Notes: An RNA of 177 nucleotides, treated with DMS and 2A3 and read out base by base. For DMS the reverse transcriptase was MarathonRT. The RNA was probed in 150 mM KOAc, 10 mM MgCl2 and 150 mM bicine (pH 8.5) at 24 C. The DMS profile rests on 2,209 reads. High DMS reactivity at an A or C suggests that its Watson-Crick edge is free. Reactivities are given for positions 27 through 126.
RNA sequence: GGGAACGACUCGAGUAGAGUCGAAAAUGUUUGUGACAUAGCAGUCAGUUGCCAUGGAGAUGAUUGCUUUAUCACCAACUCCUCUUUGCAAUGACUUCACAGCAAGGUUAUGGAGAAGCAGAUGGGCGUUACACGCCUUGUUCGCAAGGCGUGUAACAAAAGAAACAACAACAACAAC
Reactivity to DMS in 0.01 (KOAc 150mM, MgCl2 10mM, bicine 150mM(pH8.5), 24C), signal-to-noise 3, nucleotides 027 to 126: u020g020u000u010u010g010u000g020a030c070a050u010a040g000c020a000g000u000c010a020g000u000u020g030c050c110a110u010g020g010a120g000a160u000g010a010u020u000g000c020u000u000u010a060u010c040a010c010c060a020a060c010u000c010c020u000c100u000u000u010g020c050a130a070u000g000a110c080u000u010c050a070c110a100g000c050a060a040g010g000u020u000a030u000g020g010a070g000a100a100g030c030a050g020a070u000g000g010g010c160
Reactivity to 2A3 in 0.01 (KOAc 150mM, MgCl2 10mM, bicine 150mM(pH8.5), 24C), signal-to-noise 2, nucleotides 027 to 126: u100g000u000u000u030g000u000g010a000c020a040u040a020g000c010a010g020u020c010a030g030u120u180g070c050c070a150u150g080g010a160g000a050u070g000a010u000u020g040c000u060u000u000a100u020c000a010c030c010a030a030c000u020c010c000u000c010u010u080u050g000c000a090a120u090g050a140c000u040u040c150a070c040a100g040c020a050a070g080g000u040u080a020u090g040g010a100g010a040a000g000c000a000g010a100u060g040g050g040c040